[RMDB]
RNA sequence: GGGAACGACUCGAGUAGAGUCGAAAAGGUUUCUCGUUUAACCCUUGAAGACACCGCCCGUUCAGAGGGUAUCUCUCGAACCCGAAAUAACUAAAGCCAACGUGAACUUUUGCGGACCUCUGGUCCGAGAAUGUCACGUGUUCGCACGUGACAUUCUAAAAGAAACAACAACAACAAC
Reactivity to DMS in 0.01 (KOAc 150mM, MgCl2 10mM, bicine 150mM(pH8.5), 24C), signal-to-noise 2, nucleotides 027 to 126: g020g000u000u000u000c030u000c000g000u030u010u060a080a100c100c040c030u020u030g010a100a140g000a090c030a060c070c060g000c000c010c030g000u020u010c120a150g020a100g010g000g080u030a020u020c070u010c000u000c060g020a070a120c000c040c030g000a100a120a100u010a060a070c090u020a040a100a080g000c050c030a110a070c130g000u000g000a020a080c040u000u000u020u010g020c000g000g010a030c000c000u010c230u010g000g050u000c010c000g000
Reactivity to 2A3 in 0.01 (KOAc 150mM, MgCl2 10mM, bicine 150mM(pH8.5), 24C), signal-to-noise 5, nucleotides 027 to 126: g070g010u020u050u030c060u000c020g090u060u080u120a070a050c020c000c020u010u040g080a090a010g030a020c030a010c050c040g010c010c010c040g010u060u060c040a020g040a060g050g060g010u040a080u040c060u010c010u020c040g050a070a050c000c010c030g040a060a080a060u180a030a020c120u120a090a060a030g030c000c010a020a010c060g070u060g040a050a110c080u050u020u100u210g040c000g010g000a000c000c060u190c240u300g000g000u000c000c000g000